[RMDB]
RNA sequence: GGGAACGACUCGAGUAGAGUCGAAAAUGGCGGUGAUGUCACUCCAGUUGACCAAUACAUGUGUGGCGUUGAUGGAAAACCCAUUAGUGCCUACGCAUUUUUAAUGGCCAAGGAUGGAAUAACCAAAGAAUCCGCGUGUUCGCACGCGGAAAAAGAAACAACAACAACAAC
Reactivity to DMS in 0.01 (KOAc 150mM, MgCl2 10mM, bicine 150mM(pH8.5), 24C), signal-to-noise 3, nucleotides 027 to 129: u000g050g050c140g020g150u050g040a070u030g020u020c050a190c160u040c000c040a150g050u070u020g050a110c000c010a090a090u050a030c300a020u030g040u050g020u020g000g130c000g060u040u020g020a020u000g000g010a060a100a110a220c100c000c000a070u030u020a020g000u020g030c020c020u030a000c010g000c030a010u030u010u000u100u060a020a130u010g000g070c050c020a000a000g050g030a040u040g140g010a080a000u070a180a060c000c090a050a090a050g020a070a050
Reactivity to 2A3 in 0.01 (KOAc 150mM, MgCl2 10mM, bicine 150mM(pH8.5), 24C), signal-to-noise 3, nucleotides 027 to 129: u070g040g030c040g000g040u140g030a120u230g100u110c010a010c050u010c000c000a080g030u050u050g020a090c020c000a030a040u080a080c060a000u000g030u000g000u000g000g000c010g000u000u010g020a010u020g000g000a010a070a020a060c000c000c000a000u000u020a000g020u020g000c000c020u030a000c000g000c000a000u000u000u000u000u000a200a100u040g000g000c000c000a000a000g050g020a100u100g010g010a050a060u050a030a010c000c000a060a030a030g060a030a060
An RNA of 170 nucleotides, treated with DMS and 2A3 and read out base by base. Conditions: 150 mM KOAc, 10 mM MgCl2 and 150 mM bicine (pH 8.5), 24 C. For DMS, 6,366 sequencing reads were counted.